[RMDB]
RNA sequence: GGGAACGACUCGAGUAGAGUCGAAAAGACAUCCACUGGGCUAAUGCGGUCAACGCCGGGUUAGCACCUAACGUCCCACGCGACAAGUCUAACCACGACCACGAUGCUUUCCGUAACAACGCCAAGACAGCGGAUAACAAUUCGUUGUUAUCCGCUGAAAAGAAACAACAACAACAAC
Reactivity to DMS in 0.01 (KOAc 150mM, MgCl2 10mM, bicine 150mM(pH8.5), 24C), signal-to-noise 2, nucleotides 027 to 126: g040a100c110a050u000c020c020a110c200u030g000g000g020c030u010a000a050u020g050c040g000g020u010c160a080a100c180g000c000c040g000g000g000u000u010a010g010c040a040c070c030u000a030a190c180g030u000c020c000c030a040c120g000c100g000a060c140a150a210g000u020c070u060a080a050c030c000a020c090g020a050c050c020a020c020g020a020u000g000c000u000u000u000c030c000g030u000a030a140c110a030a100c080g000c000c040a140a110g000a250
Reactivity to 2A3 in 0.01 (KOAc 150mM, MgCl2 10mM, bicine 150mM(pH8.5), 24C), signal-to-noise 5, nucleotides 027 to 126: g050a020c020a050u020c020c030a060c130u090g000g000g010c010u040a070a010u130g200c020g010g030u110c150a150a040c140g000c000c000g010g060g000u000u000a000g000c040a230c010c000u030a080a030c040g040u030c010c000c020a060c050g050c050g020a040c010a060a020g020u020c010u040a040a040c030c030a040c080g010a020c000c010a020c050g030a010u050g020c030u010u020u020c000c000g040u060a050a020c040a060a010c040g040c020c020a030a020g090a060